[RMDB]
RNA sequence: GGGAACGACUCGAGUAGAGUCGAAAACACAGGCGACUUAAUCGGAGAGCGGAUACACGCGAGGAAGAUGAAAUUAUUACAUCAGUAGACUCGAGAUUACUACAACUUGCGUUGCUAUCUCAAAUAAACACAUAGGGUAGUUCGCUACCCUAUGUGUAAAAGAAACAACAACAACAAC
Reactivity to DMS in 0.01 (KOAc 150mM, MgCl2 10mM, bicine 150mM(pH8.5), 24C), signal-to-noise 5, nucleotides 027 to 126: c080a080c190a080g010g010c020g020a060c090u000u000a110a070u010c040g030g010a080g010a110g000c080g010g010a060u000a020c050a050c020g000c030g010a030g000g000a110a110g010a010u010g000a060a060a190u000u000a120u000u020a170c030a020u010c010a110g000u000a030g000a080c100u010c140g000a100g000a100u010u000a100c030u010a020c020a120a120c020u010u000g000c030g000u000u010g030c120u000a050u000c010u000c070a050a060a060u000a050a080
Reactivity to 2A3 in 0.01 (KOAc 150mM, MgCl2 10mM, bicine 150mM(pH8.5), 24C), signal-to-noise 4, nucleotides 027 to 126: c090a010c020a030g080g060c030g040a050c040u140u210a080a070u110c050g070g000a050g010a010g070c040g000g010a010u040a030c040a000c010g000c010g010a000g040g030a070a130g010a030u030g050a070a090a060u300u240a120u090u160a090c000a010u020c010a020g020u010a010g030a060c050u040c120g090a100g030a120u100u180a070c010u000a000c000a060a030c010u010u020g020c010g030u050u070g030c030u020a030u020c000u010c030a050a120a060u170a050a200